This 207-nucleotide RNA was probed chemically with DMS and 2A3.
RNA sequence: GGGAACGACUCGAGUAGAGUCGAAAACAUAAAGGGUGACGGUUACGUGUGUUUUAAUGGUUCUGCCAGUAGUGGACAUUACACAUACAGUUCUAGAAAUGGUACUGUUUAUGACGCUGAUAAAACAUACACAUUUAAAGUGGACGACUUAAGCGUAAGAGAGAUACGUGUUCGCACGUAUCUCUCUAAAAGAAACAACAACAACAAC
Reactivity to DMS in 0.01 (KOAc 150mM, MgCl2 10mM, bicine 150mM(pH8.5), 24C), signal-to-noise 1, nucleotides 027 to 156: c070a140u010a060a050a120g010g010g000u000g030a140c090g030g080u000u020a030c040g020u000g020u000g020u040u000u000u000a010a180u000g050g040u000u000c090u000g030c070c010a090g020u000a090g020u000g020g020a090c090a070u020u010a080c110a050c040a060u000a030c040a060g010u000u000c040u000a080g000a070a050a140u040g030g000u000a010c010u010g000u000u000u000a090u000g000a100c020g000c110u020g010a120u000a010a040a100a120c060a070u000a040c020a040c090a110u010u000u010a050a040a100g020u000g020g000a080c060g000a150c060u000u000a050a060g020c050g020u000a070
Reactivity to 2A3 in 0.01 (KOAc 150mM, MgCl2 10mM, bicine 150mM(pH8.5), 24C), signal-to-noise 3, nucleotides 027 to 156: c080a050u190a080a090a010g050g030g020u020g010a030c030g050g020u090u090a020c010g020u010g010u000g050u000u050u060u090a090a030u100g040g040u070u020c030u050g080c050c050a070g030u110a030g000u120g030g000a020c020a040u020u100a030c040a040c000a050u090a020c010a010g020u010u050c010u070a050g090a090a070a080u120g040g000u050a040c030u020g050u050u050u030a040u070g040a010c040g000c000u020g060a030u090a140a100a020a000c050a000u120a030c090a010c010a000u030u160u300a090a050a010g030u030g010g050a040c060g000a000c050u100u090a040a010g010c000g060u020a060
Background
Reactivities are given for positions 27 through 156. The 2A3 profile rests on 1,447 reads. 2A3 adducts were read by reverse transcription with SuperScript II with manganese. The reactions ran in a buffer of 150 mM KOAc, 10 mM MgCl2 and 150 mM bicine (pH 8.5), at 24 C.